RNA sequence: GGGAACGACUCGAGUAGAGUCGAAAAGGGGUCUUCGCUAGCUCCGUAACAAGCCAACAGCCUACUGAAGCCUCCACGGUAGGACAUGGCUUGGAGAAGGAGCUUGGACCGAAGACGGAGGCACCCAAACAAAAGGUAAGUUCGCUUACCUUUUGAACAUGUAGAAUGGUUUCGACCAUUCUACAUGAAAAGAAACAACAACAACAAC
Reactivity to DMS in 0.01 (KOAc 150mM, MgCl2 10mM, bicine 150mM(pH8.5), 24C), signal-to-noise 2, nucleotides 027 to 156: g000g020g020g040u000c000u000u010c000g070c040u000a060g010c000u000c000c010g010u010a130a270c000a030a020g010c010c010a070a090c050a220g020c030c000u010a020c020u000g000a070a120g010c060c000u000c010c030a300c030g000g000u010a030g020g000a050c020a230u000g020g020c020u000u000g030g000a120g000a170a300g020g000a020g030c000u000u000g030g010a130c160c030g000a060a040g000a060c010g010g020a050g030g030c060a190c000c000c000a040a110a220c000a010a020a030a000g000g000u000a010a010g010u000u000c300g030c000u000u010a020c000c000u020u000u000u000g010a090a300
Reactivity to 2A3 in 0.01 (KOAc 150mM, MgCl2 10mM, bicine 150mM(pH8.5), 24C), signal-to-noise 3, nucleotides 027 to 156: g040g000g020g000u010c010u000u000c020g020c030u020a010g010c000u020c000c000g010u020a060a070c000a000a000g000c010c010a080a060c080a150g040c030c000u020a020c010u040g090a180a040g040c000c020u030c020c040a030c010g000g000u000a010g000g050a010c050a130u220g010g000c000u010u010g030g020a060g020a060a090g030g000a010g000c010u010u030g000g010a020c000c060g010a010a010g000a000c030g000g010a020g030g000c030a040c020c000c020a030a110a040c000a000a000a010a000g010g010u000a000a010g020u040u130c180g030c120u000u000a000c000c000u000u000u010u010g000a040a010